Structure probing data (2A3 and DMS) for a 207-nucleotide construct. The DMS profile rests on 4,361 reads. It was measured as part of the RMDB library OK3TST.
[RMDB]
RNA sequence: GGGAACGACUCGAGUAGAGUCGAAAAUGCUGGGUUCCAUCCCAGGAUGCCUGGGUGUGUGGCCCCCCACUUACUCGUAAUAUGGGGAUAAUAACAAUAACAAAACCACCAUGACCACCACCACUGCACAGAGUUGCUCCAGAUGUCAAAUGGAUAAAGUUAGAACGAUAUUCGUAUCGUUCUAACUAAAAGAAACAACAACAACAAC
Reactivity to 2A3 in 0.01 (KOAc 150mM, MgCl2 10mM, bicine 150mM(pH8.5), 24C), signal-to-noise 5, nucleotides 027 to 156: u100g020c010u020g000g020g010u100u250c070c040a120u180c070c010c000a000g030g010a050u060g030c010c030u040g010g000g000u000g000u020g000u020g010g010c000c010c000c000c000c000a040c030u080u220a050c020u040c090g110u090a050a030u070a130u200g000g010g000g040a020u090a140a020u070a110a030c110a080a090u160a100a040c070a060a090a040a040c030c100a110c030c010a060u130g030a030c010c010a000c010c000a000c030c000a070c070u050g010c050a030c020a050g100a010g030u120u030g030c010u000c030c020a020g020a080u120g110u160c070a040a040a070u060g030g020a080u140a090a140
Reactivity to DMS in 0.01 (KOAc 150mM, MgCl2 10mM, bicine 150mM(pH8.5), 24C), signal-to-noise 3, nucleotides 027 to 156: u010g030c020u000g000g020g000u000u000c160c100a090u010c010c000c010a100g030g000a060u000g000c050c060u010g030g010g000u000g010u000g010u010g000g000c010c000c000c000c000c010a080c130u000u000a060c050u020c110g020u000a110a140u020a100u010g020g020g070g020a190u000a090a090u000a130a070c060a060a160u000a090a170c070a020a080a050a060c020c030a000c020c020a050u000g020a080c020c010a070c000c010a030c030c010a070c080u000g000c030a060c070a130g070a150g020u000u000g000c020u010c040c040a100g010a180u020g000u000c120a060a110a130u000g000g020a090u010a060a130